An RNA of 207 nucleotides, treated with DMS and 2A3 and read out base by base. The reactions ran in a buffer of 150 mM KOAc, 10 mM MgCl2 and 150 mM bicine (pH 8.5), at 24 C. For 2A3, 3,618 sequencing reads were counted.
RNA sequence: GGGAACGACUCGAGUAGAGUCGAAAACAGUGAGAAGAUGAAGGUGCCAGCCGCACAGACGCUGAGUGCUGUGUGAUGCGGGAUGCGUGUGGCUUUUCACAGCGGCUUAGAUUUCAUUUGGAGCAGACCGUGACAUCUGCCCUCCCCACCUGUAGCACCACCUAAAUAGUUUCGACUAUUUAGGUGGAAAAGAAACAACAACAACAAC
Reactivity to DMS in 0.01 (KOAc 150mM, MgCl2 10mM, bicine 150mM(pH8.5), 24C), signal-to-noise 1, nucleotides 027 to 156: c030a100g000u010g020a110g010a100a070g020a090u000g010a050a050g000g010u000g000c020c060a090g000c030c010g060c020a070c030a060g020a070c050g020c110u000g000a300g040u020g000c020u000g020u000g030u010g020a120u000g020c060g000g020g000a080u000g000c000g010u010g050u000g020g000c050u010u000u020u000c060a100c070a140g030c070g030g030c050u000u000a070g010a110u000u010u010c060a130u000u000u020g000g010a090g020c000a050g000a030c010c000g000u000g000a000c040a090u000c030u010g010c030c010c010u000c010c010c010c040a100c070c050u000g000u000a090g000c070a200
Reactivity to 2A3 in 0.01 (KOAc 150mM, MgCl2 10mM, bicine 150mM(pH8.5), 24C), signal-to-noise 5, nucleotides 027 to 156: c040a010g040u030g030a050g020a050a040g030a080u120g040a070a020g030g030u040g030c000c020a010g030c010c020g000c010a000c000a010g070a010c030g030c160u220g100a050g100u280g030c010u020g010u000g020u010g040a070u090g000c010g000g040g020a040u090g030c050g030u130g020u050g040g000c000u050u050u050u100c040a020c000a040g050c040g030g000c020u060u120a030g010a120u070u120u070c050a060u070u130u270g030g010a080g010c020a020g030a050c000c060g040u060g030a000c010a040u020c010u020g000c000c020c000u000c000c000c000c000a050c000c020u110g030u160a010g070c030a000